[RMDB]
RNA sequence: GGGAACGACUCGAGUAGAGUCGAAAACGACGAGCUUAUCGAGCAACGGCACACGGGUGUCGACGCUCGCGGCGUCGAUCGAUGCGGACACGCCGCUGUCGGCGAGGCCGCCGCUCGGGCGCCAGUAUGAUGAGGUGGAGUUCGCUCCACCUCAUCAAAAAGAAACAACAACAACAAC
Reactivity to 2A3 in 0.01 (KOAc 150mM, MgCl2 10mM, bicine 150mM(pH8.5), 24C), signal-to-noise 1, nucleotides 027 to 126: c030g100a010c010g030a020g000c050u210u150a070u260c040g030a000g000c030a050a100c020g040g000c010a010c010a030c160g300g190g000u060g020u030c030g010a000c040g010c000u000c020g020c020g000g000c020g170u010c000g020a020u060c030g000a000u120g020c010g000g000a030c060a010c170g070c020c000g050c300u190g260u260c030g010g030c000g010a040g010g050c000c000g010c000c030g000c020u010c000g020g050g000c000g000c000c000a020g070u180a100
Reactivity to DMS in 0.01 (KOAc 150mM, MgCl2 10mM, bicine 150mM(pH8.5), 24C), signal-to-noise 1, nucleotides 027 to 126: c110g010a140c140g000a150g000c030u000u000a090u010c080g000a140g000c100a030a270c010g010g000c000a050c000a290c300g000g010g000u000g050u000c000g000a030c300g010c030u000c080g000c060g000g020c000g000u000c010g030a090u010c000g000a040u010g010c010g000g010a110c160a060c100g010c000c010g000c160u000g030u000c030g040g010c010g000a090g000g000c000c000g010c020c280g000c060u000c030g030g020g020c010g010c020c000a100g010u000a100